[RMDB]
RNA sequence: GGGAACGACUCGAGUAGAGUCGAAAACAUUAGUUCGCUAAUGGAAUUAUCCUAAGUCAGCGUGGCUGAAGACAUGGAAUCGUGUCGGAAACGACACGUUUCCAACAGCUUCAGCGUAACAUCGCUGAUAUGGACCGAAGGUUCUUUCGAGAACCAAAGGUUUAGUAUUCUUCGGAAUACUAAACCUAAAAGAAACAACAACAACAAC
Reactivity to 2A3 in 0.01 (KOAc 150mM, MgCl2 10mM, bicine 150mM(pH8.5), 24C), signal-to-noise 7, nucleotides 027 to 156: c000a010u010u010a010g030u060u070c260g020c150u010a000a010u010g020g080a060a130u220u100a080u150c010c010u060a150a050g040u010c000a000g000c000g000u020g040g000c010u000g010a000a010g020a040c060a100u080g000g000a000a010u010c000g000u000g010u000c000g030g030a060a090a040c000g000a000c000a000c000g000u000u000u000c000c000a010a000c040a010g020c000u000u000c010a000g000c000g010u010a000a020c040a090u230c010g000c000u010g000a000u010a030u030g030g010a030c030c040g130a160a100g000g000u000u010c000u030u120u150c280g030a040g000a010a010c000c010a060a060
Reactivity to DMS in 0.01 (KOAc 150mM, MgCl2 10mM, bicine 150mM(pH8.5), 24C), signal-to-noise 2, nucleotides 027 to 156: c020a030u010u000a020g020u010u000c270g050c020u000a050a030u000g010g000a110a130u000u000a100u000c010c010u000a060a280g030u010c010a020g020c000g000u010g030g010c000u020g020a060a060g010a030c060a300u010g000g000a020a010u010c010g040u010g010u000c000g000g000a150a080a240c000g020a010c010a010c000g010u000u010u010c000c000a030a050c070a150g010c000u000u000c010a010g020c010g030u000a050a070c060a050u000c020g040c060u010g010a000u000a120u000g010g000a020c100c030g000a150a180g000g020u000u000c010u000u000u000c250g000a100g040a020a020c000c010a020a140
Structure probing data (2A3 and DMS) for a 207-nucleotide construct. The data come from the RNA Mapping Database (RMDB), library RNAMAK. Conditions: 150 mM KOAc, 10 mM MgCl2 and 150 mM bicine (pH 8.5), 24 C. For 2A3 the reverse transcriptase was SuperScript II with manganese. The DMS profile rests on 5,652 reads. For 2A3, 8,950 sequencing reads were counted.